An RNA of 177 nucleotides, treated with 2A3 and DMS and read out base by base. The reactions ran in a buffer of 150 mM KOAc, 10 mM MgCl2 and 150 mM bicine (pH 8.5), at 24 C. For DMS, 952 sequencing reads were counted. Values are in units of 0.01, from 0 to 300, in steps of 10. 2A3 adducts were read by reverse transcription with SuperScript II with manganese. It was measured as part of the RMDB library OK1LIB.
[RMDB]
RNA sequence: GGGAACGACUCGAGUAGAGUCGAAAAUUUCACUAUCCAAGUGAAUUGAAUCGUUUGUAUCAAAAAAUUCGCCACUACAAGGUGGAACAACGAAUGCCUCAAAGUCCAUGGGUAGAAAGGAUUGUGCACCCGGUGCACUCUUCGGAGUGCACCGGGUAAAAGAAACAACAACAACAAC
Reactivity to 2A3 in 0.01 (KOAc 150mM, MgCl2 10mM, bicine 150mM(pH8.5), 24C), signal-to-noise 1, nucleotides 027 to 126: u060u060u030c000a000c000u010a000u000c020c030a040a000g100u010g260a000a170u000u100g090a000a030u000c000g000u020u020u300g040u150a050u110c120a000a000a000a000a250a250u040u240c080g000c000c010a060c000u200a140c160a250a080g010g000u000g080g060a000a040c030a000a010c040g040a000a000u020g100c000c020u010c010a000a060a000g010u060c030c030a090u110g040g010g040u000a000g120a010a030a000g120g070a090u140u140g030u030g060c070
Reactivity to DMS in 0.01 (KOAc 150mM, MgCl2 10mM, bicine 150mM(pH8.5), 24C), signal-to-noise 1, nucleotides 027 to 126: u000u010u000c000a300c000u000a040u030c040c040a090a110g000u020g040a030a000u000u000g000a060a210u000c060g000u000u010u000g000u000a060u030c250a030a050a080a150a020a060u000u000c000g010c000c000a050c020u000a130c300a110a040g000g040u010g000g000a000a040c150a090a230c100g000a040a130u020g050c160c070u000c000a030a050a100g000u010c000c020a130u030g020g000g130u000a030g000a010a140a060g000g020a040u050u000g000u000g030c040